[RMDB]
RNA sequence: GGGAACGACUCGAGUAGAGUCGAAAAGUUAUGGAAAACGUCUUAGCUACCACUACAACAACAAUGCUGGACGGUGAUGGUUCGACUUACUCCAAACCAUCACGUAGUGGUAGUCGUUCCCAUUCAAGAAUUUAUAUGCGUUCGCGCAUAUAAAUUCAAAAGAAACAACAACAACAAC
Reactivity to 2A3 in 0.01 (KOAc 150mM, MgCl2 10mM, bicine 150mM(pH8.5), 24C), signal-to-noise 6, nucleotides 027 to 126: g030u060u080a080u260g150g080a080a090a020a030c010g020u020c030u140u220a050g010c010u040a030c020c040a030c060u100a040c030a140a000c010a050a010c020a100a170u170g040c030u080g050g020a010c050g010g010u010g010a010u030g000g060u020u020c020g020a030c050u070u110a040c020u060c040c000a060a040a030c010c010a010u040c010a000c090g020u070a020g010u010g000g000u000a000g000u000c000g000u000u000c000c000c000a010u060u070c050a070a030
Reactivity to DMS in 0.01 (KOAc 150mM, MgCl2 10mM, bicine 150mM(pH8.5), 24C), signal-to-noise 3, nucleotides 027 to 126: g020u000u000a120u000g000g000a080a060a090a120c020g000u000c020u000u020a120g030c000u000a040c050c030a010c020u010a040c030a070a050c110a080a050c210a060a060u010g010c120u020g000g000a020c040g040g030u000g000a030u010g000g000u000u000c080g000a060c080u010u000a050c150u000c030c050a070a040a020c000c000a000u000c010a020c050g010u000a040g010u000g000g010u000a010g010u000c010g000u000u000c000c000c000a150u020u000c110a080a200

The data come from the RNA Mapping Database (RMDB), library M2PK90. This 177-nucleotide RNA was probed chemically with 2A3 and DMS. Values cover nucleotides 27 to 126. The DMS profile rests on 2,751 reads.